Chemical mapping of a 207-nucleotide RNA with 2A3 and DMS.
For DMS the reverse transcriptase was MarathonRT.
RNA sequence: GGGAACGACUCGAGUAGAGUCGAAAAGAGUACAUAUGCCCAGCCUUACUGGGUCGGCUGGAUGCUUCGUGCAAAUGCUAUGUACGCCUACGUAUAUGUGCGUAGAUGCCUAUAUUUUCUCUCCUGAGAAAAUAUAGAUGCAUACAAAGGUUAUGCACUGAGUAUGGUGAUUCGUCACCAUACUCAGAAAAGAAACAACAACAACAAC
Reactivity to 2A3 in 0.01 (KOAc 150mM, MgCl2 10mM, bicine 150mM(pH8.5), 24C), signal-to-noise 2, nucleotides 027 to 156: g090a030g000u000a010c010a010u030a030u300g010c000c010c000a010g000c010c010u210u170a180c130u230g190g000g040u090c030g010g000c000u000g000g010a040u100g020c010u080u200c230g160u160g000c010a050a050a130u200g020c010u010a000u010g000u000a000c010g020c000c000u000a010c010g030u050a060u010a040u260g200u060g050c000g000u000a000g010a140u100g040c010c000u000a000u000a000u010u010u000u000c000u000c000u060c080c190u190g010a000g000a000a000a000a000u000a000u000a000g010a020u080g000c000a000u010a040c050a060a230a010g080g000u100u020a020u030g030c010a010
Reactivity to DMS in 0.01 (KOAc 150mM, MgCl2 10mM, bicine 150mM(pH8.5), 24C), signal-to-noise 1, nucleotides 027 to 156: g000a160g010u000a080c120a110u000a020u010g000c000c010c000a020g030c030c080u010u000a130c050u000g000g040g040u000c170g020g040c010u000g010g040a240u010g010c060u000u020c140g010u000g000c030a040a090a120u010g020c000u000a120u000g000u000a040c050g010c030c000u000a020c000g000u000a100u010a060u000g030u010g010c030g020u020a040g020a110u000g010c040c010u010a010u000a010u000u000u000u000c010u010c000u020c210c220u000g020a040g000a000a000a000a000u010a010u000a000g010a060u010g020c000a040u000a040c050a080a080a110g020g020u000u000a100u000g000c060a300